About this RNA:
The data come from the RNA Mapping Database (RMDB), library RFMREP. The record gives the reactivity of an RNA of 177 nucleotides to DMS and 2A3. The RNA was probed in 150 mM KOAc, 10 mM MgCl2 and 150 mM bicine (pH 8.5) at 24 C. For DMS the reverse transcriptase was MarathonRT. 2A3 adducts were read by reverse transcription with SuperScript II with manganese.

RNA sequence: GGGAACGACUCGAGUAGAGUCGAAAAGUGCGUCCCUCCCGAAGCUGCGCGCUCGGUCGAAGAGGACGACCUUCCCCGAUAGAGACGGUACCGUUCAUCGGUCAAGGGUAUACGGUAGCUGCGCUCCGAUCUUAACUUACUUCGGUAAGUUAAGAUCAAAAGAAACAACAACAACAAC
Reactivity to DMS in 0.01 (KOAc 150mM, MgCl2 10mM, bicine 150mM(pH8.5), 24C), signal-to-noise 8, nucleotides 027 to 126: g010u010g010c010g000u000c010c010c010u000c020c000c000g010a050a070g040c010u010g020c190g020c150g010c030u000c010g010g000u010c170g010a080a060g020a150g020g000a030c010g000a020c030c070u000u000c030c000c000c150g000a130u000a080g010a030g010a070c010g000g010u000a010c020c000g010u000u000c130a050u000c030g010g010u010c190a070a120g010g000g010u000a130u000a040c010g010g000u000a030g010c010u000g000c110g010c010u000c030c200
Reactivity to 2A3 in 0.01 (KOAc 150mM, MgCl2 10mM, bicine 150mM(pH8.5), 24C), signal-to-noise 9, nucleotides 027 to 126: g060u080g040c000g000u000c010c000c000u010c020c010c000g050a140a050g010c020u100g040c060g010c030g010c180u000c000g020g030u060c070g040a070a030g070a190g010g000a000c010g030a040c000c010u020u030c000c000c000c000g080a110u120a220g010a000g000a010c010g010g020u010a010c010c000g010u030u060c070a040u050c050g040g100u090c080a050a050g140g000g000u060a040u010a050c000g010g010u010a040g100c020u020g020c110g000c090u010c010c050